RNA sequence: GGGAACGACUCGAGUAGAGUCGAAAAGCACAUAUGUUGCGCAUGCAGCGCGGUGCUGCAAGAUUAAAGAUCCCCUUCGAUGCCUCGCUGAGGGCGCUUUUUCACCAGGACUUUCUCAGUCUGCUACCGAGUUAGCUCAGUUCGCUGAGCUAACUCGAAAAGAAACAACAACAACAAC
Reactivity to DMS in 0.01 (KOAc 150mM, MgCl2 10mM, bicine 150mM(pH8.5), 24C), signal-to-noise 2, nucleotides 027 to 126: g020c000a050c030a140u000a090u020g020u010u010g030c010g020c160a110u000g040c050a080g000c000g000c160g050g040u000g000c030u000g020c130a090a070g020a060u000u010a020a110a070g000a100u000c000c000c010c090u000u010c080g000a080u000g000c120c060u000c060g000c080u000g000a100g010g010g000c070g000c060u000u000u010u000u000c080a130c080c080a120g000g010a040c030u000u000u000c070u020c030a170g000u010c040u000g030c080u010a120c150
Reactivity to 2A3 in 0.01 (KOAc 150mM, MgCl2 10mM, bicine 150mM(pH8.5), 24C), signal-to-noise 2, nucleotides 027 to 126: g020c060a030c020a050u300a070u240g160u160u140g070c040g000c060a060u240g080c030a030g010c000g030c080g080g060u110g000c020u030g000c050a050a030g060a110u110u170a130a070a000g040a050u050c000c010c040c000u040u050c050g030a070u140g050c020c030u000c000g040c050u050g030a120g070g020g000c030g000c000u150u100u040u000u060c040a050c070c040a070g050g050a070c010u050u090u040c010u030c080a010g030u090c040u060g020c020u060a040c040